[RMDB]
RNA sequence: GGGAACGACUCGAGUAGAGUCGAAAAACUGCUGCCUGAGCGCACAUACAACGUCAUGGGACCCCCCUUCCUUCGGCUAUGUGCGGUACUCAUGCCGCCGCGGCCGCUCAAAGCUGAGGUCAAUGGAUAUUUACCAAAAUUUCGAUUUUGGUAAAUAAAAAGAAACAACAACAACAAC
Reactivity to DMS in 0.01 (KOAc 150mM, MgCl2 10mM, bicine 150mM(pH8.5), 24C), signal-to-noise 9, nucleotides 027 to 126: a100c080u000g000c060u000g010c020c030u010g010a100g010c050g010c060a060c080a090u010a080c120a070a080c080g010u000c060a080u000g010g000g010a160c020c010c010c010c020c020u000u000c020c010u000u000c030g010g000c020u010a060u000g020u010g010c000g000g010u000a080c140u010c160a100u010g010c020c020g010c020c030g010c140g000g000c010c000g000c100u000c040a030a090a070g010c040u000g010a050g010g000u000c100a050a090u010g010g010a260
Reactivity to 2A3 in 0.01 (KOAc 150mM, MgCl2 10mM, bicine 150mM(pH8.5), 24C), signal-to-noise 2, nucleotides 027 to 126: a000c040u060g050c020u030g000c020c040u120g070a050g030c090g000c050a030c020a030u170a030c060a100a040c070g070u040c030a110u150g060g100g150a200c000c010c010c010c000c050u000u050c010c010u030u040c020g000g000c000u000a020u090g050u080g010c020g000g000u010a030c010u030c020a040u140g020c010c020g020c000c020g000c020g000g000c000c000g000c000u030c030a080a080a020g010c020u030g020a000g020g000u040c030a030a010u070g000g010a020